Structure probing data (2A3) for a 207-nucleotide construct. The RNA was probed in 150 mM KOAc, 10 mM MgCl2 and 150 mM bicine (pH 8.5) at 24 C.
[RMDB]
RNA sequence: GGGAACGACUCGAGUAGAGUCGAAAACGUCUGAGGGCGCAGGAAGAGACUCAUCAGACUAGCUCUCCUAGGGCCCGCCCGCAGGCACGAAGAUGAGCGAAACUAAAUAUGCAGGGCUACGCUCGUAGACGCUGAAGCAAUCGACGUUUCUGGACGUGAUUGGCGAAUUCUUCGGAAUUCGCCAAUCAAAAGAAACAACAACAACAAC
Reactivity to 2A3 in 0.01 (KOAc 150mM, MgCl2 10mM, bicine 150mM(pH8.5), 24C), signal-to-noise 2, nucleotides 027 to 156: c050g000u010c000u000g010a080g000g040g010c120g030c130a020g080g030a080a110g030a030g020a070c010u010c030a120u030c020a050g040a100c030u010a000g000c000u010c010u020c010c000u020a020g050g010g010c030c000c000g000c000c000c000g000c000a000g000g000c010a000c020g030a000a030g010a010u060g000a020g000c000g000a020a030a020c120u110a020a040a060u010a010u060g010c060a170g000g040g000c000u010a020c040g030c010u050c010g100u060a040g040a090c050g040c000u060g070a120a000g000c010a020a100u050c060g130a030c030g000u000u060u030c100u160g040g020a030c030g020u040